[RMDB]
RNA sequence: GGGAACGACUCGAGUAGAGUCGAAAAGAUAUGGAUCAUACGGGAGCAGUAAGCGUCGGAAACGACGCCUACUGCGAAGAACGUAUGAGUCCUAAGUCAAACCUUCGGGACUUCGGUCCCGAAGGAAGAUUACGUUGACGUUCGCGUCAACGUAAUCAAAAGAAACAACAACAACAAC
Reactivity to DMS in 0.01 (KOAc 150mM, MgCl2 10mM, bicine 150mM(pH8.5), 24C), signal-to-noise 2, nucleotides 027 to 126: g010a030u000a170u020g000g000a170u010c000a000u020a000c000g010g040g000a090g010c000a010g010u000a000a050g000c000g050u010c000g010g010a040a050a120c000g010a010c000g030c010c010u000a000c000u010g010c010g000a070a090g010a140a140c000g000u000a010u000g010a030g030u000c000c010u010a030a080g010u000c000a090a180a230c000c000u000u000c010g010g000g000a030c000u000u000c180g040g000u000c000c010c000g000a000a000g010g000a030a020
An RNA of 177 nucleotides, treated with DMS and read out base by base.
The RNA was probed in 150 mM KOAc, 10 mM MgCl2 and 150 mM bicine (pH 8.5) at 24 C.
It was measured as part of the RMDB library TTRDEL.
DMS adducts were read by reverse transcription with MarathonRT.